[RMDB]
RNA sequence: GGGAACGACUCGAGUAGAGUCGAAAAGGGCCGCCGUGUUCAAGCGCGGGGAGUCAAUCGGACACGACCCGAAACCGGAUGAUCUAGACAUGGGCAAGACGAAGCGUGCCGAAAGGCACGUGGAGGUAUGAAGAUGGAUUUUCGAAUCCAUCUUCAUAAAAGAAACAACAACAACAAC
Reactivity to DMS in 0.01 (KOAc 150mM, MgCl2 10mM, bicine 150mM(pH8.5), 24C), signal-to-noise 7, nucleotides 027 to 126: g000g020g010c040c020g000c030c020g000u010g000u010u020c180a120a170g010c080g020c040g000g010g010g010a120g000u000c050a080a080u030c040g010g010a100c070a110c080g000a100c040c000c010g000a040a110a100c060c020g000g010a080u010g000a060u020c050u010a080g010a080c090a040u010g000g000g010c070a090a080g020a090c020g000a300a250g000c010g010u000g000c000c010g010a070a080a130g010g000c000a010c000g020u010g000g010a230g000g020u010
Reactivity to 2A3 in 0.01 (KOAc 150mM, MgCl2 10mM, bicine 150mM(pH8.5), 24C), signal-to-noise 9, nucleotides 027 to 126: g030g010g010c020c010g050c020c010g040u030g030u080u160c130a130a050g040c020g000c020g030g020g010g000a030g040u040c040a020a120u110c020g020g010a020c040a010c110g080a070c020c010c010g030a080a030a020c020c010g010g010a070u090g010a040u070c030u080a030g050a100c030a080u090g010g030g000c050a060a030g080a030c010g000a010a000g000c000g000u000g000c000c000g020a060a030a020g000g000c000a000c000g000u000g000g000a010g000g030u020
Annotation
Structure probing data (DMS and 2A3) for a 177-nucleotide construct. In probing experiments dimethyl sulfate is read out at A N1 and C N3, which are open when not base-paired. The RNA was probed in 150 mM KOAc, 10 mM MgCl2 and 150 mM bicine (pH 8.5) at 24 C. For 2A3 the reverse transcriptase was SuperScript II with manganese. Source: RMDB libraries RFM100 and RFMREP, as collected in RNAgym. DMS adducts were read by reverse transcription with MarathonRT.